[RMDB]
RNA sequence: GGGAACGACUCGAGUAGAGUCGAAAAGUUCCUUCGAUGCAUUGGCUGACAUUCUCUGCGAGUUCGUAGAGAACGAAGCUGAUGUUCGGCGUUACAUUGAGAAUGUGAAAAACUCGAGGCACGUGUACGAAGGUGGAGAGUACCUUAUCGAAGGUGCGUAUUGCCUCUAAUUCGUUAGAGGCAAUACAAAAGAAACAACAACAACAAC
Reactivity to 2A3 in 0.01 (KOAc 150mM, MgCl2 10mM, bicine 150mM(pH8.5), 24C), signal-to-noise 8, nucleotides 027 to 156: g050u050u080c010c000u010u020c010g010a020u060g000c000a000u000u010g010g000c000u010g010a010c010a020u010u000c000u010c010u000g010c010g050a110g300u190u300c030g000u020a000g000a000g000a010a000c000g010a000a000g000c000u010g000a010u000g010u020u030c020g030g000c020g020u070u080a100c050a190u060u080g030a030g050a100a090u180g060u190g160a080a060a040a020a030c030u030c050g010a040g020g010c070a010c060g020u040g030u130a060c040g030a030a020g020g010u030g030g080a150g000a010g050u050a030c000c000u040u040a050u070c030g040a020a010g000g000u010g010c000
Reactivity to DMS in 0.01 (KOAc 150mM, MgCl2 10mM, bicine 150mM(pH8.5), 24C), signal-to-noise 4, nucleotides 027 to 156: g000u000u000c000c000u010u000c000g020a110u010g040c010a010u000u000g000g000c020u000g010a300c300a070u000u000c000u000c010u000g030c010g020a300g040u020u040c030g070u010a020g000a030g000a010a010c000g010a290a040g000c000u010g010a020u000g020u000u000c030g030g020c040g000u000u010a070c010a120u000u000g010a090g040a120a170u000g000u020g000a090a090a070a080a120c020u010c020g010a020g020g020c040a040c030g030u010g040u010a110c050g000a060a090g030g030u010g020g010a170g010a240g040u010a020c010c020u000u000a090u010c080g000a100a050g000g020u000g040c120
Conditions: 150 mM KOAc, 10 mM MgCl2 and 150 mM bicine (pH 8.5), 24 C. The record gives the reactivity of an RNA of 207 nucleotides to 2A3 and DMS. The DMS profile rests on 8,373 reads. It was measured as part of the RMDB library OK3TST. Values cover nucleotides 27 to 156.